[RMDB]
Source: RMDB library M2RFPK, as collected in RNAgym. Structure probing data (2A3 and DMS) for a 207-nucleotide construct. For 2A3, 1,526 sequencing reads were counted. The reactions ran in a buffer of 150 mM KOAc, 10 mM MgCl2 and 150 mM bicine (pH 8.5), at 24 C. Reactivities are given for positions 27 through 156. For DMS, 1,754 sequencing reads were counted.
RNA sequence: GGGAACGACUCGAGUAGAGUCGAAAAGAAUCACCGUACCUAUUUAGGUUUACGCUCCAAGAUCGGUGGAUAGCAGGCCUAUCAAUAUCUAGGAGAACUGUGCUAUGUUUAGAAGAUUAGGUAGUCUAUUACACAGCCAUGUUCGCAUGGCUGUGAAGUUUGUAGACGAGUUCGCUCGUCUACAAACAAAAGAAACAACAACAACAAC
Reactivity to 2A3 in 0.01 (KOAc 150mM, MgCl2 10mM, bicine 150mM(pH8.5), 24C), signal-to-noise 3, nucleotides 027 to 156: g040a010a080u150c020a030c040c020g030u060a010c020c000u070a100u160u250u210a030g000g010u020u040u040a030c070g020c020u000c000c000a050a010g030a050u030c040g020g050u070g120g020a040u030a010g010c100a070g050g120c040c010u030a010u030c050a050a040u060a030u130c020u030a080g050g010a030g020a050a030c060u080g000u020g080c010u060a050u100g080u000u050u060a110g010a270a020g050a100u130u010a040g110g000u000a000g040u020c030u020a110u050u130a080c010a010c000a000g000c000c000a000u010g020u020u000c080g000c100a000u010g000g000c000u000g010u000g000a000a000
Reactivity to DMS in 0.01 (KOAc 150mM, MgCl2 10mM, bicine 150mM(pH8.5), 24C), signal-to-noise 1, nucleotides 027 to 156: g040a160a140u010c000a280c050c020g000u000a160c010c010u020a210u030u000u000a020g000g010u000u010u000a070c130g000c050u000c010c030a090a120g000a060u000c120g030g020u000g060g020a010u000a090g020c060a140g020g000c200c010u000a100u000c010a050a150u010a100u010c080u010a130g020g020a190g040a050a100c060u000g000u010g000c030u000a060u010g030u000u010u030a020g010a140a110g000a060u010u010a060g010g040u010a100g030u000c020u000a160u000u000a210c010a000c010a030g000c000c020a000u000g020u020u000c300g050c000a010u000g030g040c000u010g000u010g000a060a080